This 177-nucleotide RNA was probed chemically with 2A3 and DMS.
RNA sequence: GGGAACGACUCGAGUAGAGUCGAAAAAAGCCUGUUCGGUUCGUAAACUGUAAUGCAAGUAGCGUAUGCGCUCACGCAACUGGUCCAGAACCUUGACCGAACGCAGCGGUGGUAACGGCGCAGUGGCGGUAGCGAAAAAUUUCGAUUUUUCGCUACCAAAAGAAACAACAACAACAAC
Reactivity to 2A3 in 0.01 (KOAc 150mM, MgCl2 10mM, bicine 150mM(pH8.5), 24C), signal-to-noise 4, nucleotides 027 to 126: a000a000g090c020c020u040g020u020u020c020g000g000u050u040c020g030u040a030a090a120c030u070g120u220a080a090u110g050c040a070a050g000u050a030g140c000g020u100a100u240g110c060g000c020u050c010a020c040g010c010a040a070c070u100g030g060u040c040c010a040g030a090a060c000c000u010u080g010a010c000c020g010a020a010c030g000c060a010g030c030g070g070u030g010g020u060a080a020c020g030g000c000g000c050a030g010u030g050g020c030
Reactivity to DMS in 0.01 (KOAc 150mM, MgCl2 10mM, bicine 150mM(pH8.5), 24C), signal-to-noise 5, nucleotides 027 to 126: a100a070g010c020c010u010g010u010u000c040g000g020u000u010c150g010u010a090a100a070c040u000g010u010a110a070u000g000c050a090a070g010u000a060g010c020g020u000a080u000g020c060g010c030u000c080a060c080g000c010a060a050c050u000g010g000u000c100c050a050g010a160a070c090c130u010u010g010a030c020c010g000a030a020c040g020c120a040g000c080g000g020u000g000g010u010a070a070c070g010g000c040g010c010a070g020u000g020g010c160
For 2A3, 5,567 sequencing reads were counted.